[RMDB]
RNA sequence: GGGAACGACUCGAGUAGAGUCGAAAAUGAAUCAGAAUCAGAGUCAGAGGAUGAAAUAGAAGAGUUGUGUGUAGCAGACCUACCCUCAGCAGAGGACUUUUUAGAGGAGAUAAAAGAAGAAGUUGAACUGAUCGAUACUUUUCGAAGUAUCGAUCAGAAAAGAAACAACAACAACAAC
Reactivity to DMS in 0.01 (KOAc 150mM, MgCl2 10mM, bicine 150mM(pH8.5), 24C), signal-to-noise 2, nucleotides 027 to 126: u000g010a080a060u020c100a110g010a160a140u000c090a070g000a050g000u000c030a090g020a040g000g000a090u000g000a070a090a080u010a070g000a050a080g000a120g010u020u020g040u000g020u000g030u000a060g010c040a070g000a060c120c040u000a110c100c010c010u010c040a100g000c080a050g000a090g000g010a080c040u000u000u010u010u020a070g010a090g010g000a030g000a090u000a040a050a090a060g010a030a040g010a050a100g010u010u010g000a110a160